[RMDB]
RNA sequence: GGGAACGACUCGAGUAGAGUCGAAAAGAUAUGGACUAAUGGAGUAUGUACGAUAGUGCGUUUGACGGUCGUCGGAAACGACGACCCGAGCACUAUCGUACCAUACGUUGAAAUUAGUCCUAAGUCACUUCUUAGAAUGCUUCGGCAUUCUAAGAAGAAAAGAAACAACAACAACAAC
Reactivity to DMS in 0.01 (KOAc 150mM, MgCl2 10mM, bicine 150mM(pH8.5), 24C), signal-to-noise 3, nucleotides 027 to 126: g000a030u000a300u000g000g010a010c000u000a000a010u000g000g000a090g010u000a000u000g010u000a000c000g010a030u000a000g000u010g010c000g030u000u010u020g000a170c300g000g010u020c000g020u010c000g000g040a120a160a280c000g000a010c000g020a000c000c000c000g010a060g010c010a000c000u000a000u000c000g000u000a000c220c100a000u000a000c000g020u000u000g000a100a170a000u000u000a010g000u000c000c000u000a020a100g020u000c030a220
Reactivity to 2A3 in 0.01 (KOAc 150mM, MgCl2 10mM, bicine 150mM(pH8.5), 24C), signal-to-noise 1, nucleotides 027 to 126: g020a020u150a050u150g000g000a000c000u000a020a020u030g000g010a090g020u020a010u020g000u010a020c000g000a000u000a000g010u010g020c050g070u280u300u300g090a040c050g000g020u000c000g000u020c010g020g040a130a110a080c010g000a000c000g000a000c030c000c000g020a000g000c000a000c000u010a000u000c000g000u010a000c000c000a000u010a000c010g030u090u040g060a000a010a000u010u000a020g010u010c000c010u000a090a010g010u000c010a010